This 207-nucleotide RNA was probed chemically with 2A3 and DMS.
Values are in units of 0.01, from 0 to 300, in steps of 10.
[RMDB]
RNA sequence: GGGAACGACUCGAGUAGAGUCGAAAAAGAGUAUUCGUACUCUGUCAACCGUAGGUUGCGACCCGCUGAGGUGGAGCGUUGAAACAUGCUUCGAAAGAGGCAUGUGGAGCUCCAUGUAGGCGCGCAACCUAAACGGAAAAGUCUUCUUCGGAAGAAAGACCUAUUCCCAUUUCGAUGGGAAUAGGUCAAAAGAAACAACAACAACAAC
Reactivity to 2A3 in 0.01 (KOAc 150mM, MgCl2 10mM, bicine 150mM(pH8.5), 24C), signal-to-noise 2, nucleotides 027 to 156: a000g030a000g000u030a020u070u210c260g010u050a030c010u020c000u010g140u090c070a140a060c020c000g000u000a000g020g020u010u010g000c020g020a130c090c090c070g000c010u060g010a050g040g100u000g000g020a000g030c030g140u300u010g000a000a010a000c000a000u000g010c000u000u020c020g090a100a120a160g000a000g020g000c000a000u000g000u000g010g000a020g000c010u000c010c000a000u110g000u000a010g000g020c000g010c010g000c010a000a000c000c000u000a010a010a010c020g030g040a040a030a040a090g040u000c000u010u000c000u070u070c270g110g020a000a000g040a030a110a010
Reactivity to DMS in 0.01 (KOAc 150mM, MgCl2 10mM, bicine 150mM(pH8.5), 24C), signal-to-noise 1, nucleotides 027 to 156: a010g010a000g010u010a030u000u010c190g010u000a000c000u000c000u000g010u000c110a110a130c010c000g030u000a090g040g020u000u000g000c050g000a060c200c050c100g000c030u020g000a220g040g040u000g000g010a020g040c020g000u000u020g030a270a250a030c010a010u000g000c000u000u000c000g010a150a170a300g010a000g080g000c000a000u010g010u000g010g000a250g060c010u000c000c000a010u000g000u000a300g060g000c030g020c050g000c060a020a060c030c000u000a000a010a050c030g010g000a090a070a060a100g030u000c000u000u000c030u000u010c220g020g020a050a060g000a040a060a230